RNA sequence: GGGAACGACUCGAGUAGAGUCGAAAAAGUUGCAGAGUAGACAGUGAGACUGGAGAGAAGUUGGGGACCAUCAUGGAAAGACUUGGGUGCAAGAUAAUGGGCAGUCAUUGAAAAAUGUCUAAGAUGGCAAACGGUAAGGUUUCGACCUUACCGUUUGAAAAGAAACAACAACAACAAC
Reactivity to 2A3 in 0.01 (KOAc 150mM, MgCl2 10mM, bicine 150mM(pH8.5), 24C), signal-to-noise 1, nucleotides 027 to 126: a020g100u080u030g030c030a030g020a060g040u060a030g050a130c040a010g050u020g040a000g040a080c030u100g040g000a000g010a000g010a180a000g110u150u040g060g030g000g020a010c020c020a050u080c040a030u080g040g070a070a020a040g080a080c000u020u040g000g000g050u040g030c000a030a000g040a090u140a130a020u080g000g040g010c020a030g040u040c010a000u010u030g000a000a010a000a070a070u050g030u030c020u080a000a060g040a080u070g100g000
Reactivity to DMS in 0.01 (KOAc 150mM, MgCl2 10mM, bicine 150mM(pH8.5), 24C), signal-to-noise 3, nucleotides 027 to 126: a090g020u000u010g000c090a100g000a100g000u000a060g000a070c060a040g010u010g000a110g000a090c080u000g010g020a080g000a100g010a050a060g010u000u000g000g000g010g020a110c060c040a020u020c070a100u000g000g010a080a110a110g010a070c070u000u000g000g010g030u000g010c030a060a070g010a080u010a080a080u000g000g010g000c070a040g000u000c010a050u000u000g000a030a050a030a060a060u000g010u000c030u000a070a090g010a100u010g000g000

An RNA of 177 nucleotides, treated with 2A3 and DMS and read out base by base.
The data come from the RNA Mapping Database (RMDB), library OK2TRN.
The RNA was probed in 150 mM KOAc, 10 mM MgCl2 and 150 mM bicine (pH 8.5) at 24 C.
Reactivities are given for positions 27 through 126.